[RMDB]
RNA sequence: GGGAACGACUCGAGUAGAGUCGAAAAGACGAUAUGAAAAUUAACAACGAUCUCGAACAUACAAAUCUUCACGAACUGACCAGCCGCCUAUACGAUUUGCGGAGACGCAUCAACAAUAAUACCGUCUUUUCGGGCAGUCAGGUUGUCGACGACAACGUACAACUUAUCACUUCGGUGAUAAGUUGUAAAAAGAAACAACAACAACAAC
Reactivity to 2A3 in 0.01 (KOAc 150mM, MgCl2 10mM, bicine 150mM(pH8.5), 24C), signal-to-noise 7, nucleotides 027 to 156: g010a010c020g020a020u040a060u170g120a060a140a090a100u240u190a130a100c090a040a050c050g120a270u010c020u030c070g120a150a050c050a060u260a050c030a030a090a050u050c050u170u170c120a050c170g120a160a060c040u010g010a020c000c000a030g020c010c010g030c000c020u070a080u040a150c050g040a070u030u030u100g040c040g050g010a010g020a010c010g030c030a080u090c060a060a090c030a090a030u110a150a010u040a090c030c000g010u000c000u000u020u020u040c010g000g020g000c000a010g000u020c010a010g000g040u010u030g010u010c060g090a110c100g010a020c050a040a010c040g040
Reactivity to DMS in 0.01 (KOAc 150mM, MgCl2 10mM, bicine 150mM(pH8.5), 24C), signal-to-noise 3, nucleotides 027 to 156: g010a070c000g030a030u010a000u010g010a130a080a110a170u010u010a130a230c040a140a040c020g010a150u000c030u000c010g020a130a160c170a210u000a040c060a060a020a030u000c010u000u000c120a140c110g010a060a130c050u000g010a040c020c000a050g020c030c000g000c010c000u000a100u000a090c130g010a060u000u010u000g010c020g030g000a090g010a060c000g010c030a070u000c140a060a110c100a040a070u000a070a040u000a020c000c000g020u000c030u000u000u000u000c020g000g040g020c090a090g010u010c010a080g000g000u020u000g010u000c020g000a120c070g000a070c090a020a100c150g010